[RMDB]
RNA sequence: GGGAACGACUCGAGUAGAGUCGAAAACGCUUGCCGAUGUGUUCUUCCAUCCACAUGCGGGCGCCGCCUGCGCCGCAACAAAAGCUGCGGUCGGCAUGGCGCGGCAUCUCGGUCAGGCUGGCCCCCGUCGCGGGUCCAGAUUCGUCUGGACCCGCGAAAAAGAAACAACAACAACAAC
Reactivity to 2A3 in 0.01 (KOAc 150mM, MgCl2 10mM, bicine 150mM(pH8.5), 24C), signal-to-noise 1, nucleotides 027 to 126: c080g000c000u000u000g010c020c000g090a090u090g040u010g140u130u200c080u140u000c030c020a080u090c010c010a090c010a130u200g040c000g070g000g000c020g020c000c010g030c000c010u020g030c040g080c000c000g050c050a070a010c020a090a250a040a040g020c050u000g000c020g020g050u060c000g000g010c040a150u180g000g000c020g000c000g000g000c000a060u040c040u030c040g080g040u080c050a010g000g080c030u030g080g000c000c060c000c040c000g040